[RMDB]
RNA sequence: GGGAACGACUCGAGUAGAGUCGAAAACUGCGCUGAGCCCUUCUCCCCCAGCUUGCCUGUGUCCUAGGGAAUUGGAAGGUCAUCCUUCACAGGAUCGUGUGCAAGUCCUGCUCGGGGCGGAAGCAUUAUAAACCUUAGACGUUCGCGUCUAAGGUAACUCAAACAUCCUGUUCGCAGGAUGUUUGAGAAAAGAAACAACAACAACAAC
Reactivity to DMS in 0.01 (KOAc 150mM, MgCl2 10mM, bicine 150mM(pH8.5), 24C), signal-to-noise 1, nucleotides 027 to 156: c030u000g000c030g040c050u000g020a260g020c040c050c000u000u000c000u020c000c000c000c020c000a100g000c040u020u000g020c030c030u000g000u010g050u000c010c000u000a240g010g000g000a130a120u010u020g050g010a060a120g070g010u000c200a150u000c010c010u000u000c090a200c070a040g050g010a010u010c060g030u010g000u010g000c000a020a090g000u030c000c070u000g030c080u000c060g030g040g000g000c040g040g000a030a050g050c040a090u010u010a110u000a060a120a070c010c000u000u000a000g010a020c000g000u010u010c240g020c010g050u010c000u020a010a000g010g010u000a030a040
Reactivity to 2A3 in 0.01 (KOAc 150mM, MgCl2 10mM, bicine 150mM(pH8.5), 24C), signal-to-noise 2, nucleotides 027 to 156: c070u080g010c140g000c090u060g010a070g020c010c010c000u220u080c170u150c000c000c000c000c000a000g000c000u000u000g000c000c000u120g000u010g000u090c000c010u050a140g030g070g050a110a130u270u120g080g010a030a050g040g070u220c080a130u260c060c000u000u000c000a000c000a070g000g000a010u000c050g050u030g000u010g080c000a000a000g000u060c020c030u070g030c070u120c130g000g000g000g000c000g030g020a000a020g000c010a010u150u140a110u080a050a090a010c000c000u000u000a000g000a000c000g020u020u030c170g010c000g140u000c000u000a000a000g000g000u000a000a000
Chemical mapping of a 207-nucleotide RNA with DMS and 2A3. Conditions: 150 mM KOAc, 10 mM MgCl2 and 150 mM bicine (pH 8.5), 24 C. The 2A3 profile rests on 968 reads. 2A3 adducts were read by reverse transcription with SuperScript II with manganese.